[RMDB]
RNA sequence: GGGAACGACUCGAGUAGAGUCGAAAAUGACGCAGGCAAGCCGUAUGUUCUCAAUUCGGUGGCCAAGGCGGAGCAGAAUAUUCUUCAGCAGUCGUUGGACAAGGAGUAUUUGCCCAUUACCGGACUGUGUACACUCAUCCUUCGGGAUGAGUGUACAAAAAGAAACAACAACAACAAC
Reactivity to DMS in 0.01 (KOAc 150mM, MgCl2 10mM, bicine 150mM(pH8.5), 24C), signal-to-noise 2, nucleotides 027 to 126: u020g000a140c080g000c080a080g020g000c030a070a130g020c050c010g030u010a060u010g010u000u000c090u000c100a090a280u000u020c010g000g040u000g000g020c040c040a130a110g020g000c040g000g010a100g020c070a100g010a080a050u000a040u000u000c030u000u010c110a120g010c090a020g000u000c020g050u020u000g020g000a020c070a050a060g000g020a080g010u000a090u000u000u010g020c040c020c010a070u020u030a090c160c090g020g010a100c110u000g040
Reactivity to 2A3 in 0.01 (KOAc 150mM, MgCl2 10mM, bicine 150mM(pH8.5), 24C), signal-to-noise 1, nucleotides 027 to 126: u120g050a020c000g000c040a020g010g010c020a030a130g030c020c030g040u020a060u120g060u190u010c150u060c040a010a120u140u000c010g000g000u030g020g030c040c050a040a050g130g040c010g030g020a020g080c020a010g040a080a030u080a050u050u010c010u090u090c000a050g010c000a010g050u020c080g200u290u200g060g000a010c020a010a120g070g000a070g020u100a120u040u090u010g010c020c000c000a060u000u120a040c060c060g060g020a010c040u060g010
This 177-nucleotide RNA was probed chemically with DMS and 2A3. The reactions ran in a buffer of 150 mM KOAc, 10 mM MgCl2 and 150 mM bicine (pH 8.5), at 24 C. For 2A3 the reverse transcriptase was SuperScript II with manganese. The data come from the RNA Mapping Database (RMDB), library OK2TST. For DMS, 1,657 sequencing reads were counted.